The record gives the reactivity of an RNA of 207 nucleotides to 2A3 and DMS.
The reactions ran in a buffer of 150 mM KOAc, 10 mM MgCl2 and 150 mM bicine (pH 8.5), at 24 C.
For 2A3 the reverse transcriptase was SuperScript II with manganese.

[RMDB]
RNA sequence: GGGAACGACUCGAGUAGAGUCGAAAAAGCCAUUAUAAUUUCACAUGUAAUAUGGUGGGUGUCCAUCUGAGCAAGUGUGGUGCCUCAGUAGGGUUGGAGGAGGCACUUGGAGCUGAUGUAGAGAAAGGAGAGUGAAUUAAAAGUGGAAGGAGGCAAACAGCCGUAUUAUGUUCGCAUAAUACGGCUGAAAAGAAACAACAACAACAAC
Reactivity to 2A3 in 0.01 (KOAc 150mM, MgCl2 10mM, bicine 150mM(pH8.5), 24C), signal-to-noise 3, nucleotides 027 to 156: a000g150c120c040a090u110u120a110u110a170a140u060u280u210c120a120c060a090u140g070u160a120a100u110a110u150g020g030u010g000g010g020u120g060u040c010c020a060u050c020u040g020a040g050c040a080a080g010u060g040u080g050g020u030g020c000c000u040c020a060g030u070a070g010g090g020u070u140g060g010a020g000g010a010g020g000c000a000c000u000u050g020g000a050g000c020u050g020a050u050g040u090a010g010a010g000a070a030a020g040g000a020g000a010g000u050g020a030a020u070u070a110a060a030a020g010u030g000g000a000a010g060g000a000g010g000c000a030a030a030
Reactivity to DMS in 0.01 (KOAc 150mM, MgCl2 10mM, bicine 150mM(pH8.5), 24C), signal-to-noise 1, nucleotides 027 to 156: a170g040c030c010a060u010u000a100u010a050a140u010u010u010c030a070c100a110u000g020u000a050a120u000a090u000g000g020u000g010g010g000u010g060u000c030c030a080u000c020u040g000a150g040c060a040a060g030u010g030u030g000g030u010g010c050c000u000c010a120g040u000a070g020g020g020u000u000g000g010a120g000g000a050g000g000c020a010c020u010u000g090g010a010g000c050u000g010a100u000g000u010a080g040a140g000a050a060a110g010g010a070g010a080g020u000g020a050a140u000u000a040a050a080a080g010u020g000g000a030a070g020g000a020g000g000c050a050a070a220